[RMDB]
RNA sequence: GGGAACGACUCGAGUAGAGUCGAAAAUAAAUCUAAGGUGAGGAGGCAUCCUCUUUAGUCCGCAAGACACUUGGUUGAAAAGAAAGCAUAUAUAAGCUGGAAAGUACAUGGUAGUUAGUCUACUCGCGAGGAGAAGACCGUUCGCGGUCUUCUCCUCAAAAGAAACAACAACAACAAC
Reactivity to DMS in 0.01 (KOAc 150mM, MgCl2 10mM, bicine 150mM(pH8.5), 24C), signal-to-noise 1, nucleotides 027 to 126: u080a050a000a090u000c000u060a000a000g000g000u000g000a020g000g000a080g000g000c300a300u000c000c000u000c000u000u000u000a230g030u000c000c030g140c300a050a300g000a060c000a000c050u030u000g000g000u000u000g020a090a200a050a080g000a090a060a060g060c000a140u110a020u050a250u000a140a140g060c000u000g000g000a080a060a050g000u060a000c050a000u050g000g000u000a000g000u060u020a000g000u020c000u000a050c060u000c080g000c140

This 177-nucleotide RNA was probed chemically with DMS. Conditions: 150 mM KOAc, 10 mM MgCl2 and 150 mM bicine (pH 8.5), 24 C.